About this RNA:
Chemical mapping of a 207-nucleotide RNA with DMS and 2A3. The reactions ran in a buffer of 150 mM KOAc, 10 mM MgCl2 and 150 mM bicine (pH 8.5), at 24 C. Values cover nucleotides 27 to 156. Source: RMDB library M2RFOK, as collected in RNAgym. Reactivities are rounded to 0.1 and cut off at 0 and 3. 2A3 adducts were read by reverse transcription with SuperScript II with manganese.
RNA sequence: GGGAACGACUCGAGUAGAGUCGAAAAACUGCCAUACGUGGCAGAAACACGCCUUACCAGGACUAAACAGCGUGUCAAAAAAACAGUCCUUCAUACCUGAUCUGGAGGGUAGAUCAGGAAUACUAAAAAAAUCGGGUGAAGUUCGCUUCACCCGAAAGAUAUAUCAAAGCUUCGGCUUUGAUAUAUCAAAAGAAACAACAACAACAAC
Reactivity to DMS in 0.01 (KOAc 150mM, MgCl2 10mM, bicine 150mM(pH8.5), 24C), signal-to-noise 1, nucleotides 027 to 156: a100c010u000g020c030c030a030u000a050c100g060u000g010g050c000a040g020a060a120a050c010a000c010g000c000c020u000u000a080c070c050a100g040g000a060c020u000a180a050a130c100a090g040c020g010u000g000u000c050a010a000a040a090a070a010a110c100a050g030u010c000c010u000u030c060a100u010a170c010c000u010g030a030u010c010u000g000g010a120g040g040g020u010a040g000a030u000c010a010g000g020a050a080u010a130c100u000a000a000a080a050a050a150a150u000c000g020g010g020u010g010a020a020g030u000u000c300g000c000u000u010c010a020c000c000c000g010a000a000a070
Reactivity to 2A3 in 0.01 (KOAc 150mM, MgCl2 10mM, bicine 150mM(pH8.5), 24C), signal-to-noise 5, nucleotides 027 to 156: a000c000u000g000c000c000a040u050a090c180g080u020g000g000c000a000g010a010a020a000c010a000c000g010c010c010u020u080a020c040c080a010g010g000a010c010u060a140a030a020c000a010g000c000g000u000g030u060c070a110a160a090a020a000a000a000c020a000g000u000c030c000u020u100c060a090u070a170c000c010u000g000a000u000c000u020g040g080a090g080g030g040u070a010g000a000u010c000a010g020g030a000a010u080a030c070u130a020a000a030a050a020a050a150u030c000g000g030g000u000g000a010a010g020u050u120c170g040c060u000u000c000a010c000c000c000g000a000a000a000